RNA sequence: GGGAACGACUCGAGUAGAGUCGAAAAACAAGGAUGACCCAUUUGUGGGCAUGUAUGGCCUAAAGAGCCUGCCCAGCCCCAAGGACUUCUUAGCAGAGCAGGGCCCUUAGUGCAUCUGGGUGGGCCCCCACGAAGGUGAUUUCGAUCACCUUCGUGGAAAAGAAACAACAACAACAAC
Reactivity to 2A3 in 0.01 (KOAc 150mM, MgCl2 10mM, bicine 150mM(pH8.5), 24C), signal-to-noise 2, nucleotides 027 to 126: a000c040a030a040g220g020a030u070g150a150c000c020c020a070u080u160u160g240u140g010g000g000c010a000u060g070u170a060u110g070g000c000c010u070a110a120a010g050a010g020c000c000u000g000c000c000c000a010g020c000c000c040c000a000a020g040g000a020c020u110u050c000u130u190a050g060c100a070g030a010g090c010a020g000g010g010c010c000c000u030u050a020g010u020g110c030a070u020c020u000g030g000g000u030g000g030g000c000c000c020
Reactivity to DMS in 0.01 (KOAc 150mM, MgCl2 10mM, bicine 150mM(pH8.5), 24C), signal-to-noise 2, nucleotides 027 to 126: a100c040a080a100g030g020a050u010g000a120c000c000c000a160u000u030u010g020u020g050g000g020c000a020u000g050u030a000u040g010g000c000c000u000a070a000a220g000a160g000c000c010u000g010c000c030c000a110g000c140c040c000c060a080a030g000g020a170c040u030u020c050u010u010a120g000c060a030g020a150g000c130a000g000g000g010c020c010c030u030u050a030g000u000g000c180a120u010c030u010g030g040g000u000g040g000g010c000c000c010
The record gives the reactivity of an RNA of 177 nucleotides to 2A3 and DMS. 2A3 adducts were read by reverse transcription with SuperScript II with manganese. The data come from the RNA Mapping Database (RMDB), library OK1LIB.